[RMDB]
RNA sequence: GGGAACGACUCGAGUAGAGUCGAAAAGAUCAGACAGGGUACGAGCCUCAUCGCCUGUUCAAUGUCGUGCAAUUCCUGAUGAACGACAAGGAGGGCAAGGGGACUGUGUCUCUGGAGGAGACCAUGCGCUUCGGACAUUUUUCGAAAUGUCCGAAGCAAAAGAAACAACAACAACAAC
Reactivity to 2A3 in 0.01 (KOAc 150mM, MgCl2 10mM, bicine 150mM(pH8.5), 24C), signal-to-noise 1, nucleotides 027 to 126: g000a060u010c010a020g070a130c000a000g000g020g050u130a020c050g080a030g040c000c030u030c030a080u040c060g040c000c010u070g080u100u010c010a000a000u050g010u020c000g000u010g120c050a070a090u280u190c050c030u150g050a160u160g020a040a040c000g000a000c000a020a050g010g000a000g000g030g000c010a050a140g000g000g050g010a030c010u040g080u070g070u100c040u000c000u050g020g000a020g000g050a000g000a010c020c000a020u170g060c030
Reactivity to DMS in 0.01 (KOAc 150mM, MgCl2 10mM, bicine 150mM(pH8.5), 24C), signal-to-noise 1, nucleotides 027 to 126: g000a100u020c040a030g010a180c020a010g000g040g000u030a030c050g020a090g000c010c030u000c030a150u000c170g000c010c000u010g010u030u000c020a100a100u000g020u010c000g000u010g000c060a070a120u000u010c140c190u000g020a120u000g010a130a030c030g010a010c000a030a200g000g010a150g000g000g000c030a110a060g000g000g000g000a050c010u000g000u000g030u020c000u000c000u000g000g000a070g010g020a070g000a190c000c030a060u000g020c180